Structure probing data (DMS and 2A3) for a 207-nucleotide construct. For DMS, 2,936 sequencing reads were counted. Source: RMDB library OK3TST, as collected in RNAgym.
RNA sequence: GGGAACGACUCGAGUAGAGUCGAAAAUGUGAAAUACUAUUGCCCAGGUCCAGGUGAAGGCCGUGCUGGGCCACCUCCUGGCAAUGUCCAGAAGCAGCAGCCUCUCAGCCCAGGACCUGCAGACGGUAGCAGGACAGGGCACAGACACAGACCUCAGUAUCAUUACUUAUUUCGAUAAGUAAUGAUAAAAAGAAACAACAACAACAAC
Reactivity to DMS in 0.01 (KOAc 150mM, MgCl2 10mM, bicine 150mM(pH8.5), 24C), signal-to-noise 2, nucleotides 027 to 156: u000g060u000g020a060a150a140u000a090c020u000a100u020u010g000c030c010c010a050g000g020u000c020c040a130g020g050u000g000a090a070g000g040c010c030g030u000g050c030u010g020g040g000c040c040a050c170c030u010c000c000u000g000g010c050a070a080u010g010u010c000c000a080g000a100a080g030c020a090g010c000a080g000c020c000u000c040u010c140a210g070c030c000c030a130g000g010a070c010c000u000g000c000a070g020a080c030g000g000u000a070g020c000a080g000g000a130c040a160g040g010g000c000a060c060a050g000a140c040a060c030a050g000a080c060c000u010c030a160g010
Reactivity to 2A3 in 0.01 (KOAc 150mM, MgCl2 10mM, bicine 150mM(pH8.5), 24C), signal-to-noise 3, nucleotides 027 to 156: u100g030u010g070a060a030a050u170a060c060u080a080u060u100g010c020c000c010a030g010g020u040c050c050a010g030g000u050g110a120a050g090g010c020c040g090u100g090c060u150g020g040g000c010c010a020c010c000u020c000c010u010g010g010c020a060a110u080g030u010c030c020a000g010a070a020g060c020a010g000c000a020g010c020c010u040c020u010c060a070g000c000c010c000a020g020g050a140c000c000u000g000c000a010g030a110c090g050g070u090a030g010c010a010g010g050a040c020a040g020g000g000c040a000c030a010g060a010c010a000c010a100g090a090c010c040u060c010a030g060